[RMDB]
RNA sequence: GGGAACGACUCGAGUAGAGUCGAAAAGCUGAGUUAUGAUGGUUUGAUGCAUCAUAGUCUGAGUAGUGAUCCUCAGUCACUCAGCACAGACAGUAUGACUCUAUGGAUCACUACAUAGAGGCUUGUGCAUCAAACCACAAGCACAUACUGUAGCUGAGCGCCUACUACUAUUCGUAGUAGUAGGCGCAAAAGAAACAACAACAACAAC
Reactivity to DMS in 0.01 (KOAc 150mM, MgCl2 10mM, bicine 150mM(pH8.5), 24C), signal-to-noise 2, nucleotides 027 to 156: g030c020u000g020a020g000u010u000a060u010g010a050u000g010g020u000u000u040g010a110u000g010c000a020u000c110a150u000a020g030u010c000u020g000a210g030u000a080g000u010g020a050u000c030c070u000c120a040g020u000c010a090c010u000c000a110g010c060a300c210a150g020a190c040a070g070u000a020u000g010a300c020u000c030u010a100u010g010g000a120u000c070a040c010u000a000c000a030u010a060g000a090g030g050c020u010u000g020u020g000c020a070u000c110a040a010a010c030c000a010c040a060a100g000c060a140c020a070u000a020c060u010g010u000a020g050c030u000g020a210
Reactivity to 2A3 in 0.01 (KOAc 150mM, MgCl2 10mM, bicine 150mM(pH8.5), 24C), signal-to-noise 5, nucleotides 027 to 156: g010c000u030g010a010g040u120u050a090u100g160a120u050g010g000u010u020u010g010a020u010g000c010a010u110c030a080u170a020g010u000c020u030g050a010g040u020a010g000u000g000a000u010c010c010u020c040a000g000u000c000a010c030u050c040a040g120c060a000c020a060g180a050c030a010g060u130a100u120g000a010c010u050c070u140a110u150g000g000a000u010c000a000c010u000a010c000a010u160a010g240a000g010g000c000u010u030g010u000g010c000a000u000c000a000a000a000c000c000a000c000a000a010g040c030a020c010a030u110a040c020u070g100u210a010g000c020u020g040a010